[RMDB]
RNA sequence: GGGAACGACUCGAGUAGAGUCGAAAAUCCUUUAGUUUCCUUCCUCUCCUGGAGAGGUCUUCUGCCCUAGCCCGGUCUUCGAAGCUUCCUUUGGCUACUACCCGGUGGAAACAACUGAAGCUUCAACGCCUUUUUUUCCAAUCUUCUUUAGCACCGGCACAGUAGUAAACUUCGGUUUACUACUGUGAAAAGAAACAACAACAACAAC
Reactivity to 2A3 in 0.01 (KOAc 150mM, MgCl2 10mM, bicine 150mM(pH8.5), 24C), signal-to-noise 1, nucleotides 027 to 156: u010c030c000u080u040u030a090g010u030u030u000c030c030u000u000c010c030u000c010u020c010c100u130g030g100a070g000a040g020g050u020c040u060u010c030u030g020c000c010c000u040a050g000c010c070c040g010g010u010c020u120u100c130g010a010a010g000c000u040u000c000c020u080u040u010g030g010c040u100a090c040u140a130c030c020c050g000g000u020g000g040a090a110a050c020a030a010c040u040g010a000a000g000c000u030u010c050a030a050c060g020c020c030u000u040u110u060u010u110u110c080c020a140a180u120c110u190u000c010u040u300u170a090g020c050a010c010c020g000g040